[RMDB]
RNA sequence: GGGAACGACUCGAGUAGAGUCGAAAAACGACACAAUUCGUUGUGUCGUAAUGGAAAAGGCUAGGACCGGCCAGACAAAGGUGCGAAAAGAUCGAAAGAUCACACGCCACGAAUUCGUUCGUGGCAACACUAUCUCUCUCUUCGGAGAGAGAUAGUGAAAAGAAACAACAACAACAAC
Reactivity to DMS in 0.01 (KOAc 150mM, MgCl2 10mM, bicine 150mM(pH8.5), 24C), signal-to-noise 5, nucleotides 027 to 126: a040c010g010a020c010a010c000a000a030u000u020c200g010u000u000g020u000g010u000c000g000u000a020a090u010g020g010a100a100a120a130g010g010c010u010a070g010g000a060c040c020g020g000c030c000a090g010a110c170a030a070a050g010g050u000g000c060g000a090a080a080a080g000a000u000c000g000a090a110a120g000a010u000c010a120c180a050c180g000c010c000a010c000g000a020a020u000u010c170g010u000u000c000g020u000g000g000c000a030a030
Reactivity to 2A3 in 0.01 (KOAc 150mM, MgCl2 10mM, bicine 150mM(pH8.5), 24C), signal-to-noise 5, nucleotides 027 to 126: a000c010g000a000c000a000c000a030a050u110u090c200g060u090u010g000u010g000u000c000g000u020a020a090u100g040g030a070a060a080a150g020g000c030u060a050g020g100a040c020c020g040g000c010c020a030g010a030c090a040a130a010g060g000u080g050c020g050a040a030a070a070g010a010u010c000g030a080a020a010g000a010u010c010a000c000a010c100g000c010c000a000c000g010a010a020u090u070c160g030u070u000c000g000u020g000g000c000a000a000